[RMDB]
Record summary: This 177-nucleotide RNA was probed chemically with DMS. For DMS, 1,040 sequencing reads were counted. The RNA was probed in 150 mM KOAc, 10 mM MgCl2 and 150 mM bicine (pH 8.5) at 24 C.
RNA sequence: GGGAACGACUCGAGUAGAGUCGAAAAGAUAUGGAUCCAUGGUGGGAGAUACGAUAUUACCAGAAUACGUCGGAAACGACGUAUUCUGGUAAUAUCGAAUAUCAUCGAUCACCGUGGAUCCUAAGUCCGCUCUUAAAGAGUUCGCUCUUUAAGAGCGAAAAGAAACAACAACAACAAC
Reactivity to DMS in 0.01 (KOAc 150mM, MgCl2 10mM, bicine 150mM(pH8.5), 24C), signal-to-noise 1, nucleotides 027 to 126: g040a120u040a300u020g000g000a070u010c000c000a000u000g030g100u020g000g000g010a300g000a000u010a200c030g000a010u000a000u000u000a010c000c000a000g030a000a000u000a000c010g060u000c000g000g000a140a100a240c000g000a020c000g010u000a000u000u000c010u000g000g000u000a000a000u000a010u000c000g000a050a030u010a090u020c180a050u000c020g040a300u030c010a010c000c000g040u000g000g000a000u000c000c000u000a010a090g000u000c010
For DMS the reverse transcriptase was MarathonRT. It was measured as part of the RMDB library TTRINS.